[RMDB]
RNA sequence: GGGAACGACUCGAGUAGAGUCGAAAAUAUUAGGCGGUGUAAGUGCAGCCCGUCUUACUCCGUGCGGCACAGAAACACUGAUGUCGUAUACAGGGCGGGCGGUCCCUGUAAGAAAUAAAUUCGCAAAGUUCUAUAUAUGUUUCGACAUAUAUAGAACAAAAGAAACAACAACAACAAC
Reactivity to DMS in 0.01 (KOAc 150mM, MgCl2 10mM, bicine 150mM(pH8.5), 24C), signal-to-noise 6, nucleotides 027 to 126: u010a070u000u000a090g010g020c010g020g020u000g000u000a050a080g010u010g010c080a130g010c020c010c000g010u000c020u000u000a060c080u000c060c040g010u000g000c000g000g000c000a020c000a020g010a210a150a120c300a130c010u000g000a090u000g020u000c020g030u000a090u000a050c040a010g000g010g000c170g000g010g020c020g000g000u000c000c000c000u000g010u000a090a090g010a060a050a080u010a040a050a070u000u010c010g010c060a160a120a140
Reactivity to 2A3 in 0.01 (KOAc 150mM, MgCl2 10mM, bicine 150mM(pH8.5), 24C), signal-to-noise 6, nucleotides 027 to 126: u170a030u140u140a060g040g050c020g040g000u050g010u070a090a070g040u040g120c050a020g050c020c000c000g010u010c000u020u040a060c030u000c040c020g010u010g010c010g000g000c010a000c000a010g070a070a250a010c090a020c100u060g060a300u020g140u010c010g000u000a010u010a010c020a000g000g000g000c040g030g030g010c020g000g000u010c000c000c000u010g030u040a100a080g050a080a110a010u110a030a070a040u160u090c010g000c030a080a070a040

An RNA of 177 nucleotides, treated with DMS and 2A3 and read out base by base.
For 2A3, 11,191 sequencing reads were counted.
The RNA was probed in 150 mM KOAc, 10 mM MgCl2 and 150 mM bicine (pH 8.5) at 24 C.
DMS adducts were read by reverse transcription with MarathonRT.